RNA sequence: GGGAACGACUCGAGUAGAGUCGAAAAUCUGCCUCCGACACGUGUGAGAACGACAUUCAUGGUGAAUUCCUCAAGCGUCUCCCCUCUGUGUCUGGCAUAGACGUGUUCACCUCCGCUGACCUGGAUCCCACGUGUAUAGCUUCGGCUAUACACGUGGAAAAGAAACAACAACAACAAC
Reactivity to 2A3 in 0.01 (KOAc 150mM, MgCl2 10mM, bicine 150mM(pH8.5), 24C), signal-to-noise 2, nucleotides 027 to 126: u000c020u030g030c000c010u000c020c080g010a000c020a010c050g050u030g020u070g040a070g080a120a020c040g080a050c000a080u050u140c030a050u100g100g000u040g110a110a050u120u080c020c020u090c100a100a040g040c030g100u020c010u030c020c010c000c000u000c030u050g010u010g010u050c060u020g010g000c000a000u040a020g040a010c030g010u040g020u020u040c020a030c020c000u030c020c010g010c020u040g050a080c030c010u020g030g000a020u050c000
Reactivity to DMS in 0.01 (KOAc 150mM, MgCl2 10mM, bicine 150mM(pH8.5), 24C), signal-to-noise 2, nucleotides 027 to 126: u020c060u010g000c030c000u000c080c120g020a070c070a040c040g020u010g010u010g010a090g000a090a110c070g020a060c060a100u000u010c090a050u010g010g000u010g010a160a130u000u020c050c000u000c160a030a100g020c040g010u000c040u000c030c030c000c020u000c050u000g010u010g020u000c020u010g000g020c130a060u010a050g020a050c060g010u000g020u000u000c040a070c040c010u010c030c040g000c060u010g000a080c040c010u000g000g000a150u010c040
Background:
The data come from the RNA Mapping Database (RMDB), library OK2TST. Chemical mapping of a 177-nucleotide RNA with 2A3 and DMS. The DMS profile rests on 1,846 reads.